[RMDB]
RNA sequence: GGGAACGACUCGAGUAGAGUCGAAAAUCGUGACAAUUCGUUGUCACGAAACAUUAUGUGGUGAAAUAUUAAAGCCGAAAUCCCGAUACCAUAUAAUUUAAAGAAUGGAUAGUUUCGACUAUCCAAAUACUACAUUUAGGUUCGCCUAAAUGUAGUAAAAAGAAACAACAACAACAAC
Reactivity to 2A3 in 0.01 (KOAc 150mM, MgCl2 10mM, bicine 150mM(pH8.5), 24C), signal-to-noise 6, nucleotides 027 to 126: u010c000g000u000g000a000c000a010a030u030u040c210g060u110u010g000u000c000a000c000g010a000a000a000c020a010u040u050a020u030g020u010g000g000u040g090a080a120a060u250a070u200u290a210a110a030g060c060c040g060a080a070a060u020c010c010c000g030a050u060a110c000c000a000u020a000u010a050a090u080u190u190a170a190a050g100a110a080u050g010g010a000u010a010g010u010u050u140c150g040a010c000u010a010u000c000c000a010a000a000
Reactivity to DMS in 0.01 (KOAc 150mM, MgCl2 10mM, bicine 150mM(pH8.5), 24C), signal-to-noise 5, nucleotides 027 to 126: u000c000g020u000g010a020c000a020a030u000u010c190g010u000u000g010u000c000a000c000g000a020a090a100c120a040u000u000a010u000g030u000g010g010u000g010a120a090a080u000a110u020u000a050a090a150g010c110c090g000a060a100a100u000c000c000c000g010a130u010a020c010c020a010u000a010u000a020a010u000u000u010a080a070a130g000a110a120u000g000g000a010u000a000g000u000u000u000c180g000a030c000u000a000u000c000c000a020a040a060
Record summary:
Source: RMDB library M2PK50, as collected in RNAgym. Chemical mapping of a 177-nucleotide RNA with 2A3 and DMS. High 2A3 reactivity points to a flexible backbone, as in loops and unpaired stretches. The DMS profile rests on 5,719 reads. For DMS the reverse transcriptase was MarathonRT.